An RNA of 177 nucleotides, treated with 2A3 and DMS and read out base by base.
DMS adducts were read by reverse transcription with MarathonRT.
Conditions: 150 mM KOAc, 10 mM MgCl2 and 150 mM bicine (pH 8.5), 24 C.
Source: RMDB library OK2TRN, as collected in RNAgym.
RNA sequence: GGGAACGACUCGAGUAGAGUCGAAAAGCACUGCUCAAAGGACAGCUGUCAUGGGCUGCACCCGCAAACGAUGCACCCAAGCCAGUGACUGCUCAAGGUUCUGAGGUGAAGCCGUCAGACAGGCAACCCUAAAUAUAUCGUUCGCGAUAUAUUUAGGAAAAGAAACAACAACAACAAC
Reactivity to 2A3 in 0.01 (KOAc 150mM, MgCl2 10mM, bicine 150mM(pH8.5), 24C), signal-to-noise 9, nucleotides 027 to 126: g020c010a020c130u080g020c020u050c090a120a110a020g090g020a050c020a050g030c040u060g020u050c030a090u120g070g000g010c040u020g000c020a080c010c030c020g070c050a090a120a030c080g040a040u050g000c010a020c000c000c010a040a020g020c020c010a060g020u050g070a080c030u040g000c010u020c070a060a080g100g010u130u040c040u090g050a060g030g050u100g070a080a020g020c010c000g080u070c020a010g010a110c020a010g020g010c010a030a060c010
Reactivity to DMS in 0.01 (KOAc 150mM, MgCl2 10mM, bicine 150mM(pH8.5), 24C), signal-to-noise 9, nucleotides 027 to 126: g000c060a070c060u000g020c050u010c060a080a130a120g010g010a090c060a110g010c030u000g010u010c070a120u000g000g000g010c180u000g010c010a040c010c010c070g010c190a070a070a100c170g000a050u000g010c010a090c020c010c020a060a100g020c070c030a050g010u000g010a080c060u000g000c040u000c070a100a110g010g010u000u000c060u000g010a110g010g010u000g010a070a100g010c020c020g010u010c050a050g000a070c070a090g010g000c060a080a100c150